[RMDB]
RNA sequence: GGGAACGACUCGAGUAGAGUCGAAAACAAGAAAGGCGCCACAGCAGAAGCGUUCACGUCGCAGCGCCUGUCAGAUUCUGGUGAAUCUGCGAGUUCUGCUGUAGAAAAGACACGAAAGACGUGAUAAAGCACCGUAUUACUUCGGUAAUACGGUGCUAAAAGAAACAACAACAACAAC
Reactivity to DMS in 0.01 (KOAc 150mM, MgCl2 10mM, bicine 150mM(pH8.5), 24C), signal-to-noise 1, nucleotides 027 to 126: c090a090a050g010a100a080a040g000g000c030g000c010c090a010c010a020g100c010a030g000a020a040g000c120g000u030u000c040a020c050g000u020c030g000c070a240g010c000g000c000c000u140g020u080c000a060g000a030u010u010c000u030g010g040u080g020a020a000u000c010u000g000c110g000a180g000u000u020c030u030g070c050u000g000u060a120g010a050a050a040a050g000a070c100a080c080g000a070a090a030g000a000c000g010u000g000a000u090a070a060
Reactivity to 2A3 in 0.01 (KOAc 150mM, MgCl2 10mM, bicine 150mM(pH8.5), 24C), signal-to-noise 2, nucleotides 027 to 126: c000a000a020g210a140a100a000g040g000c010g000c010c010a000c060a030g000c000a000g020a010a010g000c000g060u050u050c000a000c000g000u000c000g020c020a030g000c000g030c000c000u060g010u000c000a000g010a040u020u040c000u180g270g000u300g050a020a020u000c000u000g010c000g100a040g020u050u000c000u000g060c000u000g010u020a030g180a020a070a000a000g060a050c020a000c190g140a090a000a090g040a000c000g000u000g000a010u060a000a130